Record summary
Structure probing data (2A3 and DMS) for a 177-nucleotide construct.

RNA sequence: GGGAACGACUCGAGUAGAGUCGAAAAUGUGACAUGUUCGCAUGUCACAAGCCAGGUAGUUCCUAUCUCUAUUACCUGUACAGGCCAUGGUCUGGAUAGGAAAGCUCUACCUAUUCGUAGGUAGAAACUCUUAAAGAGUAUUCGUACUCUUUAAGAGAAAAGAAACAACAACAACAAC
Reactivity to 2A3 in 0.01 (KOAc 150mM, MgCl2 10mM, bicine 150mM(pH8.5), 24C), signal-to-noise 8, nucleotides 027 to 126: u050g000u000g000a000c000a000u010g020u040u100c290g000c120a000u000g000u000c000a000c000a010a000g060c020c010a050g060g060u070a030g040u050u030c010c000u040a110u090c100u000c030u060a180u180u140a120c000c000u020g020u060a050c030a040g030g000c030c020a110u290g050g010u010c030u040g030g000a010u020a010g020g000a050a030a010g030c020u000c000u010a000c000c000u010a010u020u050c220g040u010a000g000g000u000a000g000a060a050a020
Reactivity to DMS in 0.01 (KOAc 150mM, MgCl2 10mM, bicine 150mM(pH8.5), 24C), signal-to-noise 8, nucleotides 027 to 126: u000g010u000g000a010c000a010u000g010u000u020c220g040c000a000u000g000u000c000a010c000a030a060g010c080c050a110g010g010u000a080g010u000u000c000c010u000a070u010c080u000c100u000a100u010u000a070c010c000u000g010u000a050c080a030g010g010c020c070a080u010g050g010u000c050u000g000g000a020u000a010g000g010a060a080a140g000c190u000c000u000a010c000c000u000a020u010u010c140g010u000a010g010g000u000a010g000a020a080a130
For DMS, 15,824 sequencing reads were counted.